Description: The data come from the RNA Mapping Database (RMDB), library RFM100. The record gives the reactivity of an RNA of 177 nucleotides to 2A3 and DMS.
RNA sequence: GGGAACGACUCGAGUAGAGUCGAAAAUGAAGCUGCCAGCAUGAUCUGGUUGUCAGGCAUGAGCCAAAUCUAUCCAUGGUGUUGGUGGUACUGAAAUUACCGCGUUUUCGAGGUUUUUCGUCGUGUCUCCGUUGUCCAUUUUCGAAUGGACAACGGAAAAAGAAACAACAACAACAAC
Reactivity to 2A3 in 0.01 (KOAc 150mM, MgCl2 10mM, bicine 150mM(pH8.5), 24C), signal-to-noise 2, nucleotides 027 to 126: u170g030a060a030g000c000u070g040c010c000a000g000c030a040u100g000a060u120c090u060g000g030u030u020g100u100c070a000g010g000c060a090u240g060a050g060c000c020a010a070a040u040c040u040a020u000c000c040a010u110g060g000u020g040u010u030g000g050u040g060g000u040a040c010u090g030a010a060a110u100u030a070c040c050g040c060g100u030u030u050u140c050g010a030g020g020u000u000u050u000u150c070g010u020c030g030u000g070u000c000
Reactivity to DMS in 0.01 (KOAc 150mM, MgCl2 10mM, bicine 150mM(pH8.5), 24C), signal-to-noise 2, nucleotides 027 to 126: u030g000a210a110g030c000u000g000c000c000a050g040c010a040u020g000a150u030c070u010g000g000u020u000g020u000c130a300g000g010c060a190u030g000a030g000c020c020a020a070a090u000c070u020a040u000c070c000a030u000g000g000u000g000u000u000g000g070u000g020g000u030a050c020u050g000a060a050a040u010u020a130c020c090g020c030g000u040u020u020u010c090g020a120g010g030u020u020u000u020u010c060g000u030c040g010u000g000u000c060